[RMDB]
RNA sequence: GGGAACGACUCGAGUAGAGUCGAAAAAUCUUCCAUGUCGUGUCGUACGAGAUGCUACAUAGCUUAUAAAAGUAAGCAAUAAACUAAGCAUACAGGUCGACACAUCUCUGUUCCGUCAUACGUAUACACAACAAUCAUAGUUCGCUAUGAUUGUUGUAAAAGAAACAACAACAACAAC
Reactivity to DMS in 0.01 (KOAc 150mM, MgCl2 10mM, bicine 150mM(pH8.5), 24C), signal-to-noise 9, nucleotides 027 to 126: a070u020c100u000u000c010c020a130u020g010u020c120g020u000g000u000c010g020u020a050c070g010a280g010a030u000g000c010u010a140c230a130u010a130g020c000u000u000a020u000a080a110a110a180g000u000a000a000g010c010a100a090u010a070a090a130c240u010a090a040g010c000a010u000a050c040a130g010g000u000c010g000a030c020a010c010a110u010c070u010c050u000g000u000u000c020c020g010u020c080a080u010a060c150g020u010a090u020a090c190
Reactivity to 2A3 in 0.01 (KOAc 150mM, MgCl2 10mM, bicine 150mM(pH8.5), 24C), signal-to-noise 9, nucleotides 027 to 126: a000u060c070u100u020c030c000a090u140g080u140c080g010u020g000u000c000g020u100a080c010g030a110g020a300u000g000c010u020a040c020a160u140a070g000c000u020u010a010u040a090a250a060a060g070u020a020a000g010c000a020a150u160a130a070a030c180u110a090a000g010c000a000u080a060c030a050g100g160u020c010g010a000c000a000c010a030u020c050u000c030u050g060u070u020c040c020g080u060c100a070u080a150c050g090u130a050u040a140c070
About this RNA:
The data come from the RNA Mapping Database (RMDB), libraries RFM100 and RFMREP. Chemical mapping of a 177-nucleotide RNA with DMS and 2A3. Reactivities are rounded to 0.1 and cut off at 0 and 3. The RNA was probed in 150 mM KOAc, 10 mM MgCl2 and 150 mM bicine (pH 8.5) at 24 C. 2A3 adducts were read by reverse transcription with SuperScript II with manganese.